Chemical mapping of a 177-nucleotide RNA with 2A3 and DMS. For 2A3 the reverse transcriptase was SuperScript II with manganese. For DMS the reverse transcriptase was MarathonRT. 2A3 is a SHAPE reagent: it acylates the 2'-hydroxyl of flexible nucleotides of all four kinds. It was measured as part of the RMDB library TTRDEL. The 2A3 profile rests on 3,015 reads.
[RMDB]
RNA sequence: GGGAACGACUCGAGUAGAGUCGAAAAGAUAUGGAUUGUGACAUGCUAAUGUAUCGGAAACGAUACGAUAGCAACAGCACACUGUCCUAAGUCAAAACCCCCUUAUGAGUUCGCUCAUAAGGGGGAAGUGCUAUGACAUCUUCGGAUGUCAUAGCACAAAAGAAACAACAACAACAAC
Reactivity to 2A3 in 0.01 (KOAc 150mM, MgCl2 10mM, bicine 150mM(pH8.5), 24C), signal-to-noise 2, nucleotides 027 to 126: g050a010u060a000u150g010g000a010u010u070g040u040g010a060c040a080u050g000c000u020a080a050u180g000u000a000u010c020g030g000a110a040a040c020g000a000u010a020c010g040a050u030a010g030c010a040a060c030a100g140c080a020c020a000c140u070g010u000c000c010u080a220a040g070u060c040a000a040a130a300c000c010c000c000c010u000u000a000u000g000a000g090u080u180c240g110c180u010c000a000u000a000a010g000g020g000g010g010a030a020
Reactivity to DMS in 0.01 (KOAc 150mM, MgCl2 10mM, bicine 150mM(pH8.5), 24C), signal-to-noise 2, nucleotides 027 to 126: g000a030u020a300u010g000g000a050u000u000g040u000g000a070c000a240u010g030c000u000a010a160u020g010u000a000u010c000g040g020a110a050a150c040g000a000u000a000c000g000a070u000a020g000c030a000a110c260a140g010c080a070c020a040c270u000g020u000c010c010u000a060a100g000u000c060a090a090a110a100c000c010c000c000c000u000u000a010u000g010a000g000u000u000c240g000c000u000c000a000u000a000a000g000g000g000g000g000a000a010